[RMDB]
This 177-nucleotide RNA was probed chemically with 2A3 and DMS. The 2A3 profile rests on 6,054 reads. DMS adducts were read by reverse transcription with MarathonRT. The DMS profile rests on 1,385 reads. It was measured as part of the RMDB library M2PK50. The reactions ran in a buffer of 150 mM KOAc, 10 mM MgCl2 and 150 mM bicine (pH 8.5), at 24 C.
RNA sequence: GGGAACGACUCGAGUAGAGUCGAAAAGAGACGUUGUUCGCAACGUCUCGCAAUAUGCGGCGCUCGCGCGCCGCACUGAGAUCGUCGGCAUCCAGACCGACAACACCCAAGAAUUCGUUCUUGGGAACACUUCAAAUAUGUUCGCAUAUUUGAAGUGAAAAGAAACAACAACAACAAC
Reactivity to 2A3 in 0.01 (KOAc 150mM, MgCl2 10mM, bicine 150mM(pH8.5), 24C), signal-to-noise 3, nucleotides 027 to 126: g000a000g000a000c000g000u000u010g020u060u090c220g010c080a010a000c000g000u010c000u000c000g000c000a060a110u190a060u200g000c000g000g000c000g000c070u300c300g100c050g000c020g000c010c000g000c030a010c040u160g080a120g050a150u130c120g020u000c000g010g050c000a030u030c090c020a060g170a210c020c000g020a000c010a010a010c060a040c000c000c000a000a000g000a010a030u110u120c210g040u080u000c080u000u000g000g000g000a000a000
Reactivity to DMS in 0.01 (KOAc 150mM, MgCl2 10mM, bicine 150mM(pH8.5), 24C), signal-to-noise 2, nucleotides 027 to 126: g010a000g020a010c000g010u000u000g000u000u000c150g000c020a010a000c000g000u000c000u000c030g000c170a060a060u000a120u000g000c010g060g020c020g160c000u000c290g000c300g120c020g010c010c000g000c000a000c020u000g010a130g040a060u000c100g000u000c020g000g010c040a100u000c070c080a120g000a130c000c000g010a010c010a100a050c200a180c000c000c010a000a010g000a010a070u000u010c170g020u000u000c000u000u000g010g000g000a080a090